[RMDB]
The record gives the reactivity of an RNA of 207 nucleotides to DMS and 2A3.
In probing experiments dimethyl sulfate is read out at A N1 and C N3, which are open when not base-paired.
The RNA was probed in 150 mM KOAc, 10 mM MgCl2 and 150 mM bicine (pH 8.5) at 24 C.
For 2A3 the reverse transcriptase was SuperScript II with manganese.
RNA sequence: GGGAACGACUCGAGUAGAGUCGAAAAUACCACAGGCCUGCGGUGCGGCAGUGUGGAGACCUGCCGUAAGCCGUGUUGUUUUGACAACCGGGAGAAAGCGUAUGCGGAGGCAGCGCUUUCAGGGUCUAAAAGUAUGGGAUCUUCGGAUCCCAUACAACUCUACUUGAUAGUUCGCUAUCAAGUAGAGAAAAGAAACAACAACAACAAC
Reactivity to DMS in 0.01 (KOAc 150mM, MgCl2 10mM, bicine 150mM(pH8.5), 24C), signal-to-noise 2, nucleotides 027 to 156: u010a170c010c010a160c130a080g020g000c010c010u000g010c000g040g000u000g000c070g000g000c010a020g020u010g030u000g030g010a120g030a120c130c000u010g000c010c020g050u010a020a050g030c010c010g000u000g000u000u000g010u000u000u000u000g030a050c020a020a040c000c010g010g030g020a230g010a020a020a020g040c000g040u010a040u010g010c010g080g020a240g040g030c000a140g020c010g020c000u000u000u000c010a070g000g000g000u000c030u000a060a090a100a180g000u010a020u000g000g000g010a010u000c010u010u010c300g050g010a030u000c000c000c000a000u000a000c010a030a090
Reactivity to 2A3 in 0.01 (KOAc 150mM, MgCl2 10mM, bicine 150mM(pH8.5), 24C), signal-to-noise 6, nucleotides 027 to 156: u120a010c010c010a010c040a070g060g030c020c030u070g010c040g020g020u030g000c000g030g010c000a020g010u060g040u090g260g040a060g080a040c000c000u000g010c000c000g020u030a110a010g030c000c000g020u020g000u050u010g000u000u100u050u170g070a020c020a040a030c030c000g020g030g020a190g010a030a000a000g000c000g010u040a300u180g020c030g040g090a050g240g060c000a000g000c000g000c010u000u000u000c010a020g020g000g000u000c010u030a070a050a010a030g000u000a000u000g000g010g000a000u000c020u030u080c210g030g000a000u000c010c000c000a000u000a000c000a000a000
For DMS, 4,471 sequencing reads were counted. Source: RMDB library M2RFPK, as collected in RNAgym.